The record gives the reactivity of an RNA of 177 nucleotides to 2A3 and DMS. Conditions: 150 mM KOAc, 10 mM MgCl2 and 150 mM bicine (pH 8.5), 24 C. For 2A3 the reverse transcriptase was SuperScript II with manganese. For DMS, 829 sequencing reads were counted. The data come from the RNA Mapping Database (RMDB), library M2PK90. For 2A3, 2,069 sequencing reads were counted.
RNA sequence: GGGAACGACUCGAGUAGAGUCGAAAAUGAAAGAUAAUCCGUCCAAGCCGCGGACGUUAAACUGUGGCACGGUUGUGCCUAGGUGCAACCCUGCUACUAAUGGCGGUACCCCUGCCCAAAAAAAAAACGAAUAUGAUCAGUUCGCUGAUCAUAUUCGAAAAGAAACAACAACAACAAC
Reactivity to 2A3 in 0.01 (KOAc 150mM, MgCl2 10mM, bicine 150mM(pH8.5), 24C), signal-to-noise 2, nucleotides 027 to 126: u060g020a040a040a060g120a040u150a150a130u130c010c000g000u040c000c000a040a030g030c000c020g010c020g000g010a000c000g000u020u030a010a040a030c070u050g030u030g020g000c010a010c000g000g010u000u000g010u040g000c040c030u090a270g010g090u020g010c000a000a000c010c000c000u010g020c010u010a020c000u020a080a250u170g040g000c000g030g020u120a150c000c000c000c000u050g090c040c050c060a070a050a000a020a000a000a000a010a010a020
Reactivity to DMS in 0.01 (KOAc 150mM, MgCl2 10mM, bicine 150mM(pH8.5), 24C), signal-to-noise 1, nucleotides 027 to 126: u010g010a140a100a150g010a150u020a060a170u000c060c010g000u000c000c000a130a050g010c010c010g040c020g000g000a010c020g030u000u060a010a010a000c080u010g010u000g010g010c000a010c300g000g010u000u000g010u000g010c000c040u000a140g000g050u020g060c010a000a020c010c000c030u010g010c000u000a000c010u010a030a070u010g000g010c000g000g000u010a290c000c020c010c010u020g000c000c000c000a030a000a010a000a000a010a080a070a070a060